[RMDB]
RNA sequence: GGGAACGACUCGAGUAGAGUCGAAAACUGGCCGGCCAGGUGCAUGCGCGUGAGUCAGCGCGCACAGCCGCUUCACAGCCUGCAGCAACUUCAGCUCCUGCUGCUGAGGCAAACGGAGAUGCUGGUGACGUCCUUUAACCUUCGGGUUAAAGGACGUAAAAGAAACAACAACAACAAC
Reactivity to DMS in 0.01 (KOAc 150mM, MgCl2 10mM, bicine 150mM(pH8.5), 24C), signal-to-noise 2, nucleotides 027 to 126: c060u000g020g020c060c020g110g010c030c300a090g000g010u000g060c100a300u000g000c010g050c000g040u000g000a070g010u020c250a230g000c010g010c000g030c050a000c060a160g010c010c040g030c020u000u000c010a080c180a300g010c000c000u000g010c020a030g000c030a030a110c170u010u000c200a060g000c060u000c090c010u000g000c050u000g030c020u000g000a020g010g020c010a030a140a120c140g010g000a030g000a060u000g020c020u000g020g020u000g000
Reactivity to 2A3 in 0.01 (KOAc 150mM, MgCl2 10mM, bicine 150mM(pH8.5), 24C), signal-to-noise 1, nucleotides 027 to 126: c000u000g050g000c000c020g050g000c050c100a120g000g090u100g070c110a000u050g010c010g000c000g050u050g030a040g300u200c110a070g000c010g010c000g000c000a010c010a020g050c040c030g040c010u000u020c020a140c060a060g000c000c030u040g010c050a000g000c010a040a050c000u220u140c070a070g040c030u030c030c030u040g010c020u020g000c060u050g100a050g010g030c000a060a010a010c100g020g010a060g020a080u190g000c000u010g040g000u050g030
About this RNA
Source: RMDB library OK2TST, as collected in RNAgym. Structure probing data (DMS and 2A3) for a 177-nucleotide construct. Reactivities are given for positions 27 through 126. For DMS the reverse transcriptase was MarathonRT. For 2A3 the reverse transcriptase was SuperScript II with manganese. The DMS profile rests on 842 reads.